[RMDB]
RNA sequence: GGGAACGACUCGAGUAGAGUCGAAAAGACCCCUUUAGAAGAAGAGGCUAGGGGGUAUUCCGGUGUGGGAUACUUAGUAAUAUGCAACGCUAAUUGCAUAAGAUUGUAGGACGGAAUUUACAGUCUUUAGAGAUAAGCACGUUCGCGUGCUUAUCAAUACUUGGUGGAACUUCGGUUCCACCAAGUAAAAAGAAACAACAACAACAAC
Reactivity to 2A3 in 0.01 (KOAc 150mM, MgCl2 10mM, bicine 150mM(pH8.5), 24C), signal-to-noise 3, nucleotides 027 to 156: g050a000c000c000c000c000u060u120u170a090g020a150a000g010a080a010g010a020g070g000c030u080a020g030g000g000g000g010u000a040u060u020c020c000g040g060u150g010u070g020g060g000a030u030a120c050u050u060a070g030u070a040a130u020a050u110g020c010a000a050c050g010c190u130a140a050u100u020g000c000a010u000a070a020g030a010u020u080g020u050a030g000g100a040c080g020g080a030a030u110u050u090a060c000a010g030u000c000u030u050u080a120g030a000g000a050u000a000a000g000c000a010c000g000u030u060c180g000c000g120u000g000c010u010u000a000u000c000a000a010
The record gives the reactivity of an RNA of 207 nucleotides to 2A3. Source: RMDB library M2RFPK, as collected in RNAgym. The RNA was probed in 150 mM KOAc, 10 mM MgCl2 and 150 mM bicine (pH 8.5) at 24 C. Reactivities are given for positions 27 through 156.